[RMDB]
RNA sequence: GGGAACGACUCGAGUAGAGUCGAAAAGAUAUGGAAUAGUUCUGCUCGAUAAGUCGCAGUCGGAAACGACUGGCGACUUUUGACGAGCUACUAUUCCUAAGUCAAACCUGCUGGUUCGCCAGCAGGAGUACGUAACUUACUUCGGUAAGUUACGUACAAAAGAAACAACAACAACAAC
Reactivity to 2A3 in 0.01 (KOAc 150mM, MgCl2 10mM, bicine 150mM(pH8.5), 24C), signal-to-noise 4, nucleotides 027 to 126: g000a000u030a020u080g000g000a010a000u000a010g010u100u180c150u180g030c010u000c020g180a210u070a300a010g000u000c000g000c000a000g010u000c010g000g020a030a020a050c020g010a010c000u020g090g020c000g000a000c000u020u010u050u140g240a120c060g000a000g010c000u000a000c000u000a000u010u000c000c000u010a020a000g020u000c010a030a040a160c010c000u000g000c010u010g010g140u060u090c300g070c140c010a000g000c010a000g010g000a020
Reactivity to DMS in 0.01 (KOAc 150mM, MgCl2 10mM, bicine 150mM(pH8.5), 24C), signal-to-noise 5, nucleotides 027 to 126: g010a040u000a210u010g000g010a030a000u000a000g000u000u000c210u010g000c000u000c000g010a120u010a010a020g010u000c000g030c000a030g010u000c000g020g000a060a030a090c000g020a020c010u000g020g050c010g010a010c000u000u000u000u000g010a200c170g010a020g010c000u000a010c000u000a010u000u000c000c000u000a010a070g010u000c010a150a150a210c000c000u000g020c000u000g010g020u000u020c260g020c000c000a030g010c000a010g000g010a080
An RNA of 177 nucleotides, treated with 2A3 and DMS and read out base by base.
The RNA was probed in 150 mM KOAc, 10 mM MgCl2 and 150 mM bicine (pH 8.5) at 24 C.
For 2A3 the reverse transcriptase was SuperScript II with manganese.
For DMS, 8,168 sequencing reads were counted.
It was measured as part of the RMDB library TTRDES.